Source: RMDB library ARCHII, as collected in RNAgym. An RNA of 207 nucleotides, treated with 2A3 and read out base by base. For 2A3, 589 sequencing reads were counted. Conditions: 150 mM KOAc, 10 mM MgCl2 and 150 mM bicine (pH 8.5), 24 C.
RNA sequence: GGGAACGACUCGAGUAGAGUCGAAAAGGGGAUGUUCUGGCUUCGACGCUGGUGAUGAAACUCAAUGAUGCAUGUCGAGAGUAUAUGUCCUCUCGUUAAUCAAACAUAUAUUGUUAUAGUCGCAAACGACGAAAAUUACGCUCUAGCAGCUUAAACCCCCUAGAGGGAGGUUCGCCUCCCUCUAGGGAAAAGAAACAACAACAACAAC
Reactivity to 2A3 in 0.01 (KOAc 150mM, MgCl2 10mM, bicine 150mM(pH8.5), 24C), signal-to-noise 1, nucleotides 027 to 156: g000g000g020g000a010u030g060u060u080c010u020g000g010c010u120u140c040g020a020c020g010c040u020g060g060u030g010a030u010g030a070a030a000c030u020c180a060a140u030g090a110u160g040c110a010u030g020u110c000g000a000g000a000g000u000a010u000a000u080g000u030c000c040u050c000u000c020g080u040u000a040a000u030c020a040a000a020c010a000u040a000u000a060u040u120g020u050u130a170u050a100g030u020c040g020c080a070a160a020c120g030a020c010g000a030a010a020a010u130u090a010c040g000c020u010c010u040a040g000c080a040g000c040u020u000a040a120a160c000c040